[RMDB]
RNA sequence: GGGAACGACUCGAGUAGAGUCGAAAAGGUGAGCCUCAGAGCAAGGUCAGGACACAGGCGGUCUAGCCGCCCUGGAGCCUUAGGCCCCGGGAUGGUGUCUGAAGUUGUGGAAAGGGGGUGUCCCAGUGCGGCAGGGGCUAAUGCAUCUCCCCACGCAUCACUGGUUUUAGUUCGCUAAAACCAGUGAAAAAGAAACAACAACAACAAC
Reactivity to 2A3 in 0.01 (KOAc 150mM, MgCl2 10mM, bicine 150mM(pH8.5), 24C), signal-to-noise 1, nucleotides 027 to 156: g020g040u060g020a040g010c010c000u040c050a050g010a020g170c010a000a000g120g060u020c020a020g080g020a010c000a010c000a060g060g000c000g000g190u050c200u180a080g050c000c000g030c010c000c000u010g010g010a040g000c000c010u140u180a100g000g000c020c000c000c000g020g050g000a140u150g210g000u090g050u040c010u020g000a060a080g070u020u000g030u030g110g140a120a150a110g060g000g030g010g000u010g050u090c040c000c000a010g090u040g060c000g020g000c160a000g090g020g000g000c070u090a020a050u190g040c010a130u060c020u000c080c010c010c000a030c050g060c000a020